[RMDB]
RNA sequence: GGGAACGACUCGAGUAGAGUCGAAAAUCCCAUAGGUUGCCGAAUCCGAAAGGUGGGGAGGAACCGCUUUUUGGGGUUAAUCUGCAGUGAAGCUGCAGUAGGGAUACCUUCUGUCCCGCACCCGACAGCUAACUCCCUAGGCAAUAAAGGAAGGAGAAUUUAGCUACCUAUUCGUAGGUAGCUAAAUAAAAGAAACAACAACAACAAC
Reactivity to DMS in 0.01 (KOAc 150mM, MgCl2 10mM, bicine 150mM(pH8.5), 24C), signal-to-noise 3, nucleotides 027 to 156: u000c000c000c000a180u000a040g020g030u000u000g020c000c040g010a210a190u000c010c020g010a140a110a130g010g030u000g010g020g020g000a140g020g000a100a140c100c050g020c100u000u000u000u000u000g020g000g010g040u000u000a080a110u000c010u000g010c000a040g010u000g040a160a230g030c020u000g000c010a010g010u000a050g020g020g020a060u010a030c040c100u000u000c040u000g030u000c050c010c010g010c130a140c020c000c030g030a130c070a030g000c050u000a150a250c000u000c010c000c020u000a080g030g000c040a050a080u000a060a050a140g000g020a090a060g030g030a300g000a100
Reactivity to 2A3 in 0.01 (KOAc 150mM, MgCl2 10mM, bicine 150mM(pH8.5), 24C), signal-to-noise 4, nucleotides 027 to 156: u020c000c000c000a030u090a040g110g000u010u010g000c020c010g100a160a190u070c010c010g060a090a050a020g010g010u020g010g000g010g010a010g020g020a090a070c090c030g000c050u080u160u060u060u190g040g000g000g000u010u010a030a030u080c000u000g000c010a020g010u060g220a150a030g090c000u000g000c020a000g000u010a030g010g000g000a000u060a090c000c000u010u010c010u020g010u000c000c010c010g000c010a040c010c000c000g040a130c120a040g000c010u010a030a040c000u000c000c010c000u000a000g000g000c000a000a000u080a060a090a010g030g000a020a010g010g040a080g080a100

The record gives the reactivity of an RNA of 207 nucleotides to DMS and 2A3.
For DMS the reverse transcriptase was MarathonRT.
The reactions ran in a buffer of 150 mM KOAc, 10 mM MgCl2 and 150 mM bicine (pH 8.5), at 24 C.
Source: RMDB library OK3TST, as collected in RNAgym.